Chemical mapping of a 177-nucleotide RNA with 2A3 and DMS.
RNA sequence: GGGAACGACUCGAGUAGAGUCGAAAACGACCACAUGCUCGGAAGGAGGAGAUCAUGGCCGGGCCGGCCUGGGCUGCCGAAGCUCAGCAGCUCUGAAGUCCUUUGUGUAAGUCGCGCCGCCUUUUGGACCUCUUGAAUUGUUCGCAAUUCAAGAGGUAAAAGAAACAACAACAACAAC
Reactivity to 2A3 in 0.01 (KOAc 150mM, MgCl2 10mM, bicine 150mM(pH8.5), 24C), signal-to-noise 1, nucleotides 027 to 126: c010g010a050c010c020a060c020a100u100g000c020u010c050g000g120a040a100g040g000a000g000g080a070g000a020u080c050a100u140g090g000c000c040g120g010g100c090c030g000g000c000c000u070g000g070g000c010u020g050c040c020g090a050a000g000c000u010c080a030g000c040a000g070c000u000c050u040g120a040a030g060u020c040c000u060u070u040g080u000g030u070a090a000g040u000c020g010c010g000c040c000g080c000c000u100u120u000u090g050g050
Reactivity to DMS in 0.01 (KOAc 150mM, MgCl2 10mM, bicine 150mM(pH8.5), 24C), signal-to-noise 2, nucleotides 027 to 126: c090g000a110c050c050a090c080a090u000g000c070u010c030g030g000a090a120g010g000a100g020g010a070g000a050u000c090a080u010g010g050c010c020g000g010g000c090c050g030g010c040c010u010g020g010g030c030u000g010c100c050g010a090a070g020c080u000c040a120g000c010a070g030c020u000c030u020g010a070a120g010u010c010c040u010u010u030g000u010g000u000a090a090g010u010c020g020c140g040c010c020g030c060c040u020u010u000u030g010g010